[RMDB]
RNA sequence: GGGAACGACUCGAGUAGAGUCGAAAACGGAUAGCACGGAAACGUGCUAUCCGAAAAUAGGGGUGUCAGGGCUCUGGAGCCCCCCCCGAGCCCCGGCUAACUCUAUGUCUAGGGGGGCAAAACAAAACAUGCCAUUAAUAUUCGUAUUAAUGGCAUGAAAAGAAACAACAACAACAAC
Reactivity to DMS in 0.01 (KOAc 150mM, MgCl2 10mM, bicine 150mM(pH8.5), 24C), signal-to-noise 1, nucleotides 027 to 126: c030g010g000a000u000a020g010c010a010c000g000g000a100a090a190c010g020u010g000c010u010a000u010c000c010g000a010a010a100a130u000a030g000g000g040g040u010g030u000c000a040g010g000g010c000u000c000u040g020g010a230g000c040c000c000c010c010c000c000c120g000a020g000c010c000c000c030g000g000c000u030a030a110c000u000c030u010a020u000g010u000c110u000a100g000g000g010g010g000g030c040a050a010a050a030c140a070a110a060a190

This 177-nucleotide RNA was probed chemically with DMS. The reactions ran in a buffer of 150 mM KOAc, 10 mM MgCl2 and 150 mM bicine (pH 8.5), at 24 C.